[RMDB]
RNA sequence: GGGAACGACUCGAGUAGAGUCGAAAACUCGGCGGGCUCGGCCCCGGCGGCCGGCGUCUGGACGGCCUCGUCCGGUUGAGCUUCGUCGUCGGAUGCCGCGGCAGCAGCCUCGGUCUCGCCGUCGGAGCCCUGACGAGGGGUUCGCCCCUCGUCAGGGAAAAGAAACAACAACAACAAC
Reactivity to 2A3 in 0.01 (KOAc 150mM, MgCl2 10mM, bicine 150mM(pH8.5), 24C), signal-to-noise 1, nucleotides 027 to 126: c030u030c000g000g010c000g000g000g000c030u020c040g010g000c000c000c000c000g000g030c020g020g000c050c060g020g020c020g140u040c080u130g040g050a000c000g000g060c020c030u150c070g160u050c050c030g050g000u020u200g070a010g020c000u140u110c040g000u010c000g000u000c000g050g000a040u080g030c010c000g020c020g040g010c030a100g010c050a060g050c080c000u010c050g060g030u050c030u040c040g020c010c020g040u050c030g050g050a060g030
This 177-nucleotide RNA was probed chemically with 2A3. 2A3 adducts were read by reverse transcription with SuperScript II with manganese. Conditions: 150 mM KOAc, 10 mM MgCl2 and 150 mM bicine (pH 8.5), 24 C. The data come from the RNA Mapping Database (RMDB), library OK1LIB.